[RMDB]
RNA sequence: GGGAACGACUCGAGUAGAGUCGAAAACGUCCGCUGGGAGCUCAAGAAUGCGUGAACUACGAUCGGGACCUGAAGCGCGCACGGGUUCUCUAGCGUGUCGCACGCGGCCGGGGAGCUCCUGUGCUGAAGCGCGCACGGCAACCGAAAGGUGCGAAUACUUGAAUAAACAGUUCGCUGUUUAUUCAAGAAAAGAAACAACAACAACAAC
Reactivity to DMS in 0.01 (KOAc 150mM, MgCl2 10mM, bicine 150mM(pH8.5), 24C), signal-to-noise 3, nucleotides 027 to 156: c050g000u000c010c020g020c030u000g010g010g010a040g040c010u000c020a080a110g010a140a300u010g000c020g030u000g000a120a130c040u000a200c000g010a150u000c050g020g000g010a030c020c020u000g020a050a100g000c010g040c010g030c000a300c020g020g000g040u000u000c010u010c050u000a100g020c120g020u010g010u000c060g030c040a050c000g020c010g000g030c300c050g000g010g000g010a090g030c020u000c000c010u010g020u000g000c020u000g000a070a060g020c020g050c010g030c020a180c040g000g000c020a070a080c000c010g020a110a120a160g020g020u000g020c020g000a040a070u000a120